[RMDB]
RNA sequence: GGGAACGACUCGAGUAGAGUCGAAAAGAUGCAUUCAUUGAGUUUUAUAGUGAAUUCAUGCUGUCUCAUCGUAUCACACCAGCUGUUAUCAAGUUUAUUUUUACUGGUCUGAUCAACAGUUCAGUAACAUCACCACAGAGUAUGUCGCAAGCAUGUCCCGUACAGAAAAGUUCGCUUUUCUGUACGGAAAAGAAACAACAACAACAAC
Reactivity to 2A3 in 0.01 (KOAc 150mM, MgCl2 10mM, bicine 150mM(pH8.5), 24C), signal-to-noise 7, nucleotides 027 to 156: g070a010u040g000c020a000u010u040c000a000u050u170g110a090g220u180u140u090u170a200u220a070g040u040g030a030a020u060u050c010a020u070g090c020u020g030u030c020u000c030a080u130c050g050u090a040u150c030a030c010a030c100c020a020g020c030u050g060u170u080a080u160c060a080a060g030u020u100u110a190u090u150u030u060u050a020c010u000g000g030u010c020u010g060a140u150c080a040a160c010a010g010u070u060c000a000g010u030a030a030c010a050u080c040a020c060c000a060c030a070g030a040g060u070a060u140g060u070c050g010c090a040a020g030c020a030u080g030u060c010
Reactivity to DMS in 0.01 (KOAc 150mM, MgCl2 10mM, bicine 150mM(pH8.5), 24C), signal-to-noise 3, nucleotides 027 to 156: g020a100u000g010c060a150u000u000c030a050u010u020g020a090g020u000u000u010u010a110u010a130g030u030g020a050a060u000u000c040a060u000g000c040u000g030u000c020u010c070a130u010c120g020u000a110u000c050a040c060a070c000c000a070g020c010u000g020u000u000a160u000c060a050a190g010u000u000u000a100u010u000u000u000u000a030c040u000g010g000u000c040u010g000a120u000c160a070a140c010a030g020u000u000c050a050g010u000a030a080c130a090u000c050a100c040c040a070c070a060g000a150g020u010a090u000g020u010c010g030c060a070a080g010c070a130u010g000u010c030